[RMDB]
RNA sequence: GGGAACGACUCGAGUAGAGUCGAAAAUUGGAUUAUUGCACCUAAAAGAUAUAAGGCCAAUUACUGCUCUGGAGAAUGUGAAUUUGUAUUUUUGCAAAAGUAUCCUCAUACCCAUCUUGUGCACCAAUCGUUACUUACCAUUCGUGGUAAGUAACGAAAAAGAAACAACAACAACAAC
Reactivity to 2A3 in 0.01 (KOAc 150mM, MgCl2 10mM, bicine 150mM(pH8.5), 24C), signal-to-noise 9, nucleotides 027 to 126: u040u030g030g020a010u050u070a050u060u210g050c030a080c020c040u110a080a100a040a040g090a040u080a010u040a140a040g140g040c010c010a000a010u040u020a030c030u040g090c020u000c040u090g060g010a030g040a100a090u100g050u050g090a090a130u020u050u060g100u060a230u050u120u030u110u070g020c000a000a000a020a040g040u050a070u040c010c000u040c020a060u070a110c010c010c010a020u030c040u030u100g030u030g020c020a030c030c020a020a050
Reactivity to DMS in 0.01 (KOAc 150mM, MgCl2 10mM, bicine 150mM(pH8.5), 24C), signal-to-noise 3, nucleotides 027 to 126: u030u000g000g000a100u010u020a020u020u000g000c060a070c140c130u000a070a100a130a080g030a120u060a050u040a050a030g010g000c080c020a020a050u010u040a110c060u020g010c030u020c050u000g000g010a070g010a060a050u020g010u000g000a080a150u020u030u000g010u000a040u000u030u000u020u000g030c050a020a030a080a100g010u010a080u000c010c010u000c090a040u000a050c040c000c010a050u000c060u000u010g010u000g000c060a110c110c080a050a110
Record summary:
The record gives the reactivity of an RNA of 177 nucleotides to 2A3 and DMS. DMS adducts were read by reverse transcription with MarathonRT. Reactivities are given for positions 27 through 126.